This 177-nucleotide RNA was probed chemically with DMS and 2A3. The reactions ran in a buffer of 150 mM KOAc, 10 mM MgCl2 and 150 mM bicine (pH 8.5), at 24 C. It was measured as part of the RMDB library OK1LIB. The 2A3 profile rests on 1,085 reads.

RNA sequence: GGGAACGACUCGAGUAGAGUCGAAAAACUACCUUGGCGGCCGCAGUGAUAUGGGACGCAUGGGAAAGCAUGGAGCCAUUGCAGCGGCAGCAUUGGCUUGGUACCCAACUCGUGAAUUCAUAUUUCCACUAAAUGGGCCUUUCGAGGCCCAUUUAGUAAAAGAAACAACAACAACAAC
Reactivity to DMS in 0.01 (KOAc 150mM, MgCl2 10mM, bicine 150mM(pH8.5), 24C), signal-to-noise 1, nucleotides 027 to 126: a100c030u000a090c060c000u020u000g020g000c060g040g030c030c010g000c000a100g000u000g030a100u110a090u020g000g030g020a210c030g070c000a060u040g000g000g000a240a050a050g000c020a110u000g000g020a070g010c010c010a030u000u000g010c000a040g040c010g000g000c000a120g000c010a060u020u020g030g040c110u000u000g020g040u010a090c020c000c080a060a040c150u010c160g000u070g020a140a040u010u010c080a020u010a120u000u000u000c090c140
Reactivity to 2A3 in 0.01 (KOAc 150mM, MgCl2 10mM, bicine 150mM(pH8.5), 24C), signal-to-noise 3, nucleotides 027 to 126: a000c080u090a100c030c000u090u140g180g000c010g030g060c000c010g000c040a040g010u040g130a120u100a040u210g000g000g020a030c100g000c080a030u020g020g030g140a170a010a070g090c050a000u060g060g000a090g070c000c020a050u050u120g050c040a070g010c020g040g000c000a010g000c010a020u000u010g030g000c020u020u030g020g000u050a080c020c000c000a010a030c070u060c030g140u100g090a090a090u240u040c080a030u080a130u100u000u000c020c000